[RMDB]
RNA sequence: GGGAACGACUCGAGUAGAGUCGAAAAUAGCUCAGACUAGAUGCUAGUAGUGAUCGCCAUGGCUAGCUACGUAUAUCUAGGCAUCUAGCGUACCUAGACUAGAGUCGUACGUGCUAGCUAGCACAUGAGGUGGCGUAACAUUCGUGUUACGCCACCUAAAAGAAACAACAACAACAAC
Reactivity to 2A3 in 0.01 (KOAc 150mM, MgCl2 10mM, bicine 150mM(pH8.5), 24C), signal-to-noise 1, nucleotides 027 to 126: u060a000g000c000u010c080a100g070a300c060u100a030g020a240u180g030c020u050a020g010u020a000g040u050g070a070u090c060g060c040c000a020u050g000g000c000u000a000g000c000u070a050c010g020u020a010u000a030u020c050u020a010g060g030c000a120u040c000u010a010g010c030g150u150a110c010c000u000a000g020a060c030u000a010g000a040g060u170c120g000u060a020c020g000u000g000c010u020a100g000c000u000a000g020c000a000c000a080u140g100
Reactivity to DMS in 0.01 (KOAc 150mM, MgCl2 10mM, bicine 150mM(pH8.5), 24C), signal-to-noise 2, nucleotides 027 to 126: u000a050g000c040u000c050a100g000a090c080u000a030g010a130u000g030c000u000a040g000u000a020g030u000g000a080u000c090g060c100c010a050u000g020g000c000u000a030g010c000u000a040c050g000u000a020u000a100u010c000u000a020g000g010c110a130u000c000u000a010g000c160g030u030a150c100c030u000a020g020a040c080u000a050g000a020g000u010c200g030u020a030c010g000u000g190c100u000a000g000c020u000a020g010c040a110c060a050u030g010